Conditions: 150 mM KOAc, 10 mM MgCl2 and 150 mM bicine (pH 8.5), 24 C.
This 207-nucleotide RNA was probed chemically with 2A3.
Reactivities are rounded to 0.1 and cut off at 0 and 3.
2A3 adducts were read by reverse transcription with SuperScript II with manganese.
RNA sequence: GGGAACGACUCGAGUAGAGUCGAAAAGAUAACGAGGCCAAAGUUUUGGAGCUGAUGGAAGGUGAGCACAGACAACUGGCUAGAGCGAUCAUUGAGCUGACCUACAAACACAAGGUGGUGAAAGUUAUGCGACCUGGCACAGAUGGGAAGACCGUCAAGAGCUUAUGAUGUUCGCAUCAUAAGCUCUAAAAGAAACAACAACAACAAC
Reactivity to 2A3 in 0.01 (KOAc 150mM, MgCl2 10mM, bicine 150mM(pH8.5), 24C), signal-to-noise 2, nucleotides 027 to 156: g020a050u080a050a050c080g000a030g030g000c020c000a040a100a040g030u060u070u060u070g060g010a070g020c030u030g010a040u020g030g100a040a060g000g000u040g020a030g000c020a000c010a070g050a020c030a050a010c130u010g020g030c020u050a020g000a000g040c010g040a030u090c060a160u040u120g080a000g000c000u030g030a030c020c000u090a090c080a080a150a010c000a000c020a080a000g100g000u040g020g010u030g020a160a070a050g070u150u090a050u090g000c000g090a090c010c000u030g000g020c030a040c000a080g050a000u040g000g030g030a060a030g020a050c020c030g010u060c040a060